[RMDB]
About this RNA:
The record gives the reactivity of an RNA of 207 nucleotides to DMS and 2A3. For 2A3 the reverse transcriptase was SuperScript II with manganese. For DMS the reverse transcriptase was MarathonRT. Conditions: 150 mM KOAc, 10 mM MgCl2 and 150 mM bicine (pH 8.5), 24 C. The 2A3 profile rests on 6,476 reads.
RNA sequence: GGGAACGACUCGAGUAGAGUCGAAAAAUGGAACACUUAAUCAGAAUCAAAGAAGAGACCUAGGAUAUGUCCUUAAGUCACAGUUAAUUCAUUUAAUGCACACUUUAAGUGUCUACUGUCAGGCACUGUCCUAGAUGUGGGAGGUUCAGUAAAAAGAAUCAUACGAUAUCUUCGGAUAUCGUAUGAUAAAAGAAACAACAACAACAAC
Reactivity to DMS in 0.01 (KOAc 150mM, MgCl2 10mM, bicine 150mM(pH8.5), 24C), signal-to-noise 4, nucleotides 027 to 156: a090u010g000g000a100a090c060a110c050u000u000a070a090u000c030a070g010a080a060u000c040a060a090a130g010a090a150g020a160g000a050c050c020u000a030g010g000a070u000a040u010g010u000c010c060u000u000a090a110g020u010c100a060c030a070g000u000u000a050a130u000u010c040a050u010u000u000a020a040u010g030c130a110c150a120c090u000u000u000a040a050g030u010g020u010c030u000a090c040u000g000u000c070a060g000g010c000a020c030u000g020u000c020c010u000a030g000a050u000g030u000g010g020g010a060g000g010u000u000c030a130g040u000a040a070a070a070a090g010a110
Reactivity to 2A3 in 0.01 (KOAc 150mM, MgCl2 10mM, bicine 150mM(pH8.5), 24C), signal-to-noise 6, nucleotides 027 to 156: a010u120g010g010a080a030c050a020c100u090u100a080a050u120c030a050g080a120a040u080c070a100a110a090g060a090a030g040a050g030a050c010c000u010a010g000g000a010u020a060u230g050u040c010c000u050u120a100a020g080u150c060a010c000a030g030u050u100a070a050u120u060c030a030u040u040u070a040a020u110g040c110a030c030a070c160u050u060u060a060a000g000u010g010u020c020u040a060c010u010g030u040c030a000g010g000c040a020c070u010g000u010c000c000u020a040g010a090u080g030u050g040g040g020a040g010g020u020u040c040a020g030u140a040a080a030a010a020g090a040